[RMDB]
RNA sequence: GGGAACGACUCGAGUAGAGUCGAAAAGCGUACUACUGUAGAGGUAAGCUGGAGCGUAACUCGAACUAUCCCAAAUAGGAUAGUUCACGCGAGUUACGCGUUGAAAGCUUACUACCCACCUACAGUAUCGCAAAACGCGGACAGUUCGCUGUCCGCGGCGAAUAGUUCGGUUCGCCGAACUAUUCGCAAAAGAAACAACAACAACAAC
Reactivity to DMS in 0.01 (KOAc 150mM, MgCl2 10mM, bicine 150mM(pH8.5), 24C), signal-to-noise 1, nucleotides 027 to 156: g040c030g090u000a090c080u000a010c010u000g000u000a000g000a150g040g030u000a020a020g010c010u000g000g030a300g000c000g050u000a000a030c000u000c010g020a050a040c000u000a010u010c000c000c010a040a170a280u010a060g000g010a030u000a010g000u000u000c040a050c120g040c050g000a030g030u000u000a010c010g030c000g010u000u020g020a150a120a260g020c000u000u000a000c000u000a000c040c000c030a300c190c010u010a040c010a020g010u010a000u000c020g000c030a050a090a090a180c000g000c000g020g000a010c000a070g060u000u020c280g050c020u000g000u000c000c030g010c000g000
Reactivity to 2A3 in 0.01 (KOAc 150mM, MgCl2 10mM, bicine 150mM(pH8.5), 24C), signal-to-noise 3, nucleotides 027 to 156: g010c000g020u090a060c060u010a000c000u020g000u010a010g010a020g050g010u000a000a000g030c010u010g000g010a030g020c000g000u000a000a000c000u010c040g000a000a000c000u000a010u020c020c040c030a180a240a110u290a090g010g000a000u000a010g000u030u040c060a020c070g220c110g010a010g000u020u010a000c010g010c000g000u040u030g000a000a000a000g010c000u010u000a000c000u000a000c010c010c040a090c010c000u000a000c000a010g010u010a020u230c000g000c000a030a120a000a050c010g010c010g010g000a000c000a010g020u060u090c160g100c150u010g000u010c000c000g000c000g000